[RMDB]
RNA sequence: GGGAACGACUCGAGUAGAGUCGAAAAGAAAGAAGAUCGAUGAUGACUUCCAUAUAUACAUUCCUUGGAAAGCUGAACAAAAUGAGUGAAAACUCUAUACUGUCAUCCUCGUCGAACUGAGGUCCAAAGCCGCAGGUAGAUUCGUCUACCUGCGGCUAAAAGAAACAACAACAACAAC
Reactivity to 2A3 in 0.01 (KOAc 150mM, MgCl2 10mM, bicine 150mM(pH8.5), 24C), signal-to-noise 1, nucleotides 027 to 126: g040a030a060a010g000a080a000g010a210u030c010g040a060u000g000a000u050g000a000c000u050u020c050c080a000u120a000u030a000u050a110c150a100u150u110c000c000u000u200g010g000a000a110a000g000c060u160g000a040a040c050a000a050a000a050u230g000a000g000u010g070a000a000a100a000c000u000c040u000a050u000a060c050u120g000u030c000a000u000c000c040u080c000g050u040c090g120a230a140c030u050g000a040g020g030u000c000c000a130a010
Conditions: 150 mM KOAc, 10 mM MgCl2 and 150 mM bicine (pH 8.5), 24 C. This 177-nucleotide RNA was probed chemically with 2A3. Reactivities are given for positions 27 through 126. 2A3 adducts were read by reverse transcription with SuperScript II with manganese. The 2A3 profile rests on 415 reads.